RNA sequence: GGGAACGACUCGAGUAGAGUCGAAAAGUUCUCCUCGCAUCGGACUGGCUCAUUCUCGGAGAGGGCGGACGGUCCUGAGAACUCUUAUCUUCCUGCUUAGAAGAGGAGUCUCCUGGACGCUUCCGCCCGCUCGGGAUGGGCCUCAGUGCCGACGAGGCUCAUGCAUUUCGUUCGCGAAAUGCAUGAGAAAAGAAACAACAACAACAAC
Reactivity to 2A3 in 0.01 (KOAc 150mM, MgCl2 10mM, bicine 150mM(pH8.5), 24C), signal-to-noise 2, nucleotides 027 to 156: g030u060u020c010u010c000c020u000c000g040c040a200u030c000g000g020a010c020u050g040g010c000u000c010a030u210u070c110u110c110g110g000a030g010a050g020g020g000c030g010g000a020c030g010g020u000c010c000u040g040a080g010a100a050c000u000c010u060u220a140u060c000u010u030c010c070u190g170c250u160u300a040g010a000a000g010a020g030g000a000g010u000c020u040c040c100u040g020g000a010c030g090c210u020u000c000c010g000c010c000c000g000c000u000c000g010g000g000a000u000g010g000g000c020c010u000c000a000g000u010g020c000c000g000a000c000g000a000g010g000
Description: This 207-nucleotide RNA was probed chemically with 2A3. As a SHAPE reagent, 2A3 marks flexible, mostly unpaired nucleotides at the ribose 2'-OH. It was measured as part of the RMDB library VIROID.